[RMDB]
RNA sequence: GGGAACGACUCGAGUAGAGUCGAAAAGCUCGGUGACACCGCGUCUGCCUGGGUCCGAAAGAUUUCUUGUCGCAAAUCUACAAGACAUUGGUUAACGUGUGGGCCGCUUGAGCGGCCGCUCGGCGGGUCAUCCGUGGCGCUUCGGUGCUAUGGAUGAAAAAGAAACAACAACAACAAC
Reactivity to 2A3 in 0.01 (KOAc 150mM, MgCl2 10mM, bicine 150mM(pH8.5), 24C), signal-to-noise 7, nucleotides 027 to 126: g020c000u010c010g030g040u050g040a020c020a030c090c010g010c000g030u010c040u040g010c010c000u040g040g000g040u000c010c000g040a090a060a010g020a010u010u030u020c040u060u160g120u110c060g010c100a030a040a060u030c020u020a030c040a060a020g020a010c020a040u030u090g030g010u060u110a070a020c010g010u020g020u110g060g050g000c000c000g010c010u140u240g040a040g040c000g010g010c010c000g000c000u020c000g050g000c000g000g000g000
Reactivity to DMS in 0.01 (KOAc 150mM, MgCl2 10mM, bicine 150mM(pH8.5), 24C), signal-to-noise 5, nucleotides 027 to 126: g020c010u010c020g020g010u000g000a090c080a100c030c030g000c010g000u010c080u010g000c010c010u000g010g010g010u000c010c030g000a100a130a050g010a020u010u000u000c030u020u030g010u010c180g010c170a030a040a030u010c020u000a050c210a150a080g000a010c040a060u010u000g000g010u000u010a070a210c050g020u010g020u020g010g010g010c010c000g020c010u020u040g020a090g010c010g000g000c040c030g000c010u010c030g010g010c020g000g000g000